Annotation:
An RNA of 177 nucleotides, treated with DMS and 2A3 and read out base by base. Reactivities are given for positions 27 through 126. The RNA was probed in 150 mM KOAc, 10 mM MgCl2 and 150 mM bicine (pH 8.5) at 24 C. For 2A3 the reverse transcriptase was SuperScript II with manganese. Values are in units of 0.01, from 0 to 300, in steps of 10. 2A3 is a SHAPE reagent: it acylates the 2'-hydroxyl of flexible nucleotides of all four kinds. Source: RMDB library RFM100, as collected in RNAgym.
RNA sequence: GGGAACGACUCGAGUAGAGUCGAAAAACCGGUGGGUUAAUACGCGGAGGGGCUGCGGGGGAGGACUUAGGGGACCAGGACCUCAGUGAGGCCCCAGAAAGCACCCGGGAGGGGCCUCCGAUCCUGCGUUCCACAAAUCAUUCGUGAUUUGUGGAACAAAAGAAACAACAACAACAAC
Reactivity to DMS in 0.01 (KOAc 150mM, MgCl2 10mM, bicine 150mM(pH8.5), 24C), signal-to-noise 1, nucleotides 027 to 126: a140c040c000g000g000u000g010g000g040u000u000a020a080u000a050c090g000c080g000g020a290g000g020g000g000c130u030g010c100g000g000g000g010g000a060g010g000a080c170u010u000a070g000g020g000g030a090c140c040a000g020g000a050c080c060u010c040a080g030u030g010a020g000g000c000c010c010c000a000g000a100a070a170g030c090a080c040c060c030g000g000g000a300g000g000g000g010c000c000u000c030c000g000a060u000c000c000u000g000c280
Reactivity to 2A3 in 0.01 (KOAc 150mM, MgCl2 10mM, bicine 150mM(pH8.5), 24C), signal-to-noise 2, nucleotides 027 to 126: a000c010c000g020g080u130g070g000g000u130u200a080a010u130a130c020g030c070g070g030a100g090g010g020g000c070u110g010c070g010g000g000g010g010a070g000g000a040c070u060u130a030g020g010g030g020a010c030c000a000g010g020a030c030c040u050c020a030g010u110g160a000g000g010c000c000c000c000a020g000a010a090a010g020c020a020c020c010c040g000g030g020a090g010g000g020g040c000c000u000c000c000g000a010u030c000c010u040g010c050